Background: Chemical mapping of a 207-nucleotide RNA with 2A3. Values cover nucleotides 27 to 156. The data come from the RNA Mapping Database (RMDB), library M2RFPK. Conditions: 150 mM KOAc, 10 mM MgCl2 and 150 mM bicine (pH 8.5), 24 C.
[RMDB]
RNA sequence: GGGAACGACUCGAGUAGAGUCGAAAACGGCAUUUCCCCAGCAGCCAUGACCUACCAGGCUGCGGUGCGGCUCGCCGCACAGGUCAUCCCUCAUCGGGCUCGUCCUGCGUCCUUCCACGCCAACCCAAGACCAUUGCUUCCUUCGGGAAGCAAUGAACCUUGUCCUACAGUUCGCUGUAGGACAAGGAAAAGAAACAACAACAACAAC
Reactivity to 2A3 in 0.01 (KOAc 150mM, MgCl2 10mM, bicine 150mM(pH8.5), 24C), signal-to-noise 1, nucleotides 027 to 156: c040g070g020c030a110u030u020u040c010c000c000c000a040g000c000a000g000c000c020a180u150g000a050c020c000u110a150c110c040a000g000g000c010u010g000c000g000g010u020g000c010g010g010c020u060c140g170c000c000g000c000a000c000a000g000g020u050c020a080u060c000c020c000u080c020a150u100c060g020g030g000c050u030c050g070u060c000c020u030g020c010g020u030c000c080u060u050c030c000a050c080g020c020c010a060a060c030c000c040a080a010g080a040c070c000a010u000u000g000c010u000u010c000c000u000u050c060g090g000g000a000a000g000c000a000a000u000g000a000a010
2A3 adducts were read by reverse transcription with SuperScript II with manganese.